The record gives the reactivity of an RNA of 177 nucleotides to DMS and 2A3. 2A3 is a SHAPE reagent: it acylates the 2'-hydroxyl of flexible nucleotides of all four kinds. The DMS profile rests on 3,016 reads. It was measured as part of the RMDB library TTRDEL.

RNA sequence: GGGAACGACUCGAGUAGAGUCGAAAAGAUAUGGACGUUGAAACAACAGCUAUGAUCGAUCGGAAACGAUCGCGUAUAGACAUGUAUGUAGACGUCCUAAGUCAAAACCCAUACUUCGGUAUGGGAACUGUUCCUUUAGGUUCGCCUAAAGGAACAGAAAAGAAACAACAACAACAAC
Reactivity to DMS in 0.01 (KOAc 150mM, MgCl2 10mM, bicine 150mM(pH8.5), 24C), signal-to-noise 4, nucleotides 027 to 126: g010a060u000a300u000g000g000a000c000g010u000u010g000a180a120a100c080a050a050c030a050g000c000u000a000u000g000a030u000c000g000a000u010c010g000g000a160a080a180c000g020a010u000c000g010c230g030u000a000u000a010g000a090c120a120u000g000u000a090u000g000u000a260g000a000c000g000u000c000c000u010a020a100g000u000c020a080a060a080a120c020c010c000a010u000a010c010u010u020c170g030g000u000a000u000g000g000g000a020a070
Reactivity to 2A3 in 0.01 (KOAc 150mM, MgCl2 10mM, bicine 150mM(pH8.5), 24C), signal-to-noise 4, nucleotides 027 to 126: g030a020u070a040u170g000g000a000c000g010u040u060g160a230a120a040c030a030a010c010a040g010c000u020a020u040g020a080u100c010g000a000u020c000g020g040a080a040a060c020g010a000u010c000g010c020g060u110a000u000a010g130a090c190a300u060g030u080a290u110g030u010a040g000a020c000g000u000c010c000u000a060a010g040u030c020a040a020a100a240c000c000c000a010u000a000c000u040u120c300g100g010u000a000u010g000g020g000a000a030

Values are in units of 0.01, from 0 to 300, in steps of 10. The reactions ran in a buffer of 150 mM KOAc, 10 mM MgCl2 and 150 mM bicine (pH 8.5), at 24 C.